[RMDB]
RNA sequence: GGGAACGACUCGAGUAGAGUCGAAAAUUUUGAGCUUUCGAGCUCAAAACAACAGGUGUCCCGACCAGGAAAAACAGAUUUACACGAAGUGAAAGAUCGAAAGGGCCACCAUGUUCGCAUGGUGGAAACCUACACGACCAUUCGUGGUCGUGUAGGUAAAAGAAACAACAACAACAAC
Reactivity to 2A3 in 0.01 (KOAc 150mM, MgCl2 10mM, bicine 150mM(pH8.5), 24C), signal-to-noise 1, nucleotides 027 to 126: u000u020u000u010g010a000g050c010u050u040u170c300g100a000g000c000u000c010a000a000a000a030c000a020a000c050a130g010g000u030g000u040c020c000c000g000a000c000c010a050g080g110a150a120a030a040a000c050a040g040a030u090u040u150a030c070a000c090g210a280a030g000u030g080a080a010a040g060a030u040c000g050a140a040a000g080g040g010c000c000a000c010c000a000u020g030u010u060c110g000c110a000u000g000g000u050g030g180a030a030
Reactivity to DMS in 0.01 (KOAc 150mM, MgCl2 10mM, bicine 150mM(pH8.5), 24C), signal-to-noise 2, nucleotides 027 to 126: u000u000u000u000g000a010g020c000u000u000u000c150g030a010g010c000u000c000a010a000a040a040c090a100a110c180a170g010g000u000g000u000c000c000c010g000a120c020c010a300g000g000a030a020a030a100a050c120a100g000a090u000u000u000a210c020a040c040g000a090a110g000u000g000a080a070a090g000a030u000c030g000a020a110a060g020g000g000c000c000a010c000c000a020u000g000u000u040c110g000c000a030u000g000g010u000g010g000a020a020
The data come from the RNA Mapping Database (RMDB), library M2PK50. Structure probing data (2A3 and DMS) for a 177-nucleotide construct. The 2A3 profile rests on 1,034 reads. The reactions ran in a buffer of 150 mM KOAc, 10 mM MgCl2 and 150 mM bicine (pH 8.5), at 24 C. The DMS profile rests on 1,423 reads. Values cover nucleotides 27 to 126.